This 177-nucleotide RNA was probed chemically with DMS. The DMS profile rests on 1,051 reads. The RNA was probed in 150 mM KOAc, 10 mM MgCl2 and 150 mM bicine (pH 8.5) at 24 C. DMS adducts were read by reverse transcription with MarathonRT. The data come from the RNA Mapping Database (RMDB), library OK2TRN.

RNA sequence: GGGAACGACUCGAGUAGAGUCGAAAAAUGGGCUGCCGGCCCAUGUCGCCACCCUGGCCCUUGGCAGAGCAGGCGGCACACAGAUCCGCACUGCAGCGCUGCAUGCGCUAGGGAUUGUGGCCGGGGCGGCAAAGUUCGGAUUCGUCCGAACUUUGCCAAAAGAAACAACAACAACAAC
Reactivity to DMS in 0.01 (KOAc 150mM, MgCl2 10mM, bicine 150mM(pH8.5), 24C), signal-to-noise 1, nucleotides 027 to 126: a070u030g000g010g000c020u010g020c170c100g040g000c010c000c010a020u000g020u020c100g020c020c080a080c030c000c010u000g020g000c030c030c050u000u010g000g040c050a050g040a180g000c020a020g000g010c020g000g020c200a150c110a150c300a140g030a090u000c020c020g000c020a100c000u000g000c050a090g020c030g000c000u000g030c170a110u020g030c060g010c000u000a070g000g010g010a090u000u000g050u010g000g020c000c010g000g000g010g020c150